Structure probing data (DMS and 2A3) for a 177-nucleotide construct.

RNA sequence: GGGAACGACUCGAGUAGAGUCGAAAAUCAUCGUUCUUCGGAACGAUGAAGUAUAACGCGGGCUCCGGACACAGGCGUAGCUGGCCUGGGAUAGUCACAGUUUGGGGCAAACUUUCGAGUUUGCCAAGUGCUAAUACGCAUUCGUGCGUAUUAGCACAAAAGAAACAACAACAACAAC
Reactivity to DMS in 0.01 (KOAc 150mM, MgCl2 10mM, bicine 150mM(pH8.5), 24C), signal-to-noise 2, nucleotides 027 to 126: u020c000a000u000c000g010u000u000c000u000u000c180g000g020a020a010c000g020a000u000g010a020a050g020u020a080u010a080a080c120g030c050g000g000g000c060u000c030c020g010g000a100c120a100c060a040g000g000c040g010u000a090g010c050u020g000g000c010c010u000g000g000g000a120u000a030g040u000c060a130c080a130g000u000u000u000g000g010g000g010c010a000a000a020c000u010u020u010c200g020a030g020u000u000u010g000c000c020a070a100
Reactivity to 2A3 in 0.01 (KOAc 150mM, MgCl2 10mM, bicine 150mM(pH8.5), 24C), signal-to-noise 1, nucleotides 027 to 126: u030c000a000u010c000g000u000u030c020u020u030c210g150g010a000a060c000g020a000u000g000a000a000g020u040a090u050a130a030c010g040c060g030g000g000c000u040c050c020g050g000a030c030a000c010a120g000g000c030g040u070a020g110c100u110g080g000c030c010u010g040g030g000a070u070a090g000u040c050a000c000a140g060u060u160u150g070g000g000g000c000a000a000a000c000u150u020u030c180g060a010g000u010u000u000g010c000c010a030a010

DMS adducts were read by reverse transcription with MarathonRT. The 2A3 profile rests on 1,358 reads. Conditions: 150 mM KOAc, 10 mM MgCl2 and 150 mM bicine (pH 8.5), 24 C.